[RMDB]
RNA sequence: GGGAACGACUCGAGUAGAGUCGAAAAUUAUAUAGCGUGUGCAAGACGCUGAACUUGCCAUGAUCUGGAACUUUAGUGCUGAGGUCCCAGUUCCAGAUCAUCAUUUCGGACCUCAGCACUAAUAUAAACUGAGCUAAUUAUUCGUAAUUAGCUCAGUAAAAGAAACAACAACAACAAC
Reactivity to 2A3 in 0.01 (KOAc 150mM, MgCl2 10mM, bicine 150mM(pH8.5), 24C), signal-to-noise 4, nucleotides 027 to 126: u140u040a080u040a070u100a200g040c010g010u050g090u100g080c030a010a030g040a040c060g040c240u060g050a060a020c020u020u010g020c020c020a040u020g010a040u010c010u010g020g030a030a040c030u060u190u120a060g010u010g000c020u010g010a010g000g010u030c000c070c030a030g020u030u020c020c000a000g010a010u000c000a010u000c000a020u020u180u160c040g020g000a010c000c000u000c000a010g000c000a000c000u010a030a010u070a010u020a030a100
Reactivity to DMS in 0.01 (KOAc 150mM, MgCl2 10mM, bicine 150mM(pH8.5), 24C), signal-to-noise 6, nucleotides 027 to 126: u010u010a100u010a130u020a090g020c030g020u010g020u000g020c090a050a070g010a150c040g020c070u010g010a060a090c060u000u000g010c020c180a080u000g000a020u000c020u000g010g000a030a030c080u010u000u010a020g010u000g000c000u000g010a020g000g000u000c010c020c140a080g000u000u000c020c010a030g000a020u000c030a010u000c190a090u000u010u000c160g010g000a050c000c000u000c010a010g000c000a000c010u000a030a020u010a080u010a060a090
Background
An RNA of 177 nucleotides, treated with 2A3 and DMS and read out base by base. The DMS profile rests on 9,436 reads. For 2A3 the reverse transcriptase was SuperScript II with manganese. It was measured as part of the RMDB library M2PK90. Values are in units of 0.01, from 0 to 300, in steps of 10. For 2A3, 6,902 sequencing reads were counted.